Chemical mapping of a 177-nucleotide RNA with 2A3 and DMS. DMS adducts were read by reverse transcription with MarathonRT. Conditions: 150 mM KOAc, 10 mM MgCl2 and 150 mM bicine (pH 8.5), 24 C.
[RMDB]
RNA sequence: GGGAACGACUCGAGUAGAGUCGAAAAAGUGCAAAGCAUGGUUGUAAUUCCGGCAACCCGGAGACGUUCUGGACGCGGGUUCGAUUCCCGCCACCUCCACAGUGGGCAUUCUCAAGAGUGUUCAGUGCACUCCUGUAAGUUUCGACUUACAGGAGUGAAAAGAAACAACAACAACAAC
Reactivity to 2A3 in 0.01 (KOAc 150mM, MgCl2 10mM, bicine 150mM(pH8.5), 24C), signal-to-noise 6, nucleotides 027 to 126: a000g200u150g030c070a080a050a030g030c040a080u110g050g000u020u010g050u080a110a140u060u010c020c000g020g000c010a020a010c020c000c010g030g010a020g010a040c040g030u090u030c040u060g080g030a060c040g000c010g010g000g000u020u040c030g030a040u070u030c000c000c010g000c010c010a060c010c000u050c010c010a020c010a060g110u050g000g000g000c010a010u050u000c070u080c100a160a090g040a010g030u020g000u020u030c030a020g050u020g050
Reactivity to DMS in 0.01 (KOAc 150mM, MgCl2 10mM, bicine 150mM(pH8.5), 24C), signal-to-noise 5, nucleotides 027 to 126: a080g020u010g010c070a080a120a120g020c060a060u020g000g010u000u000g000u000a040a140u000u010c020c030g000g000c030a030a030c030c000c110g010g000a050g000a100c030g020u000u000c020u000g010g030a100c190g020c010g000g000g020u020u010c130g000a300u020u020c010c010c000g020c030c140a080c070c000u000c030c030a120c080a070g010u010g000g010g010c010a020u000u000c000u000c240a100a130g000a020g020u000g020u000u000c020a040g000u010g000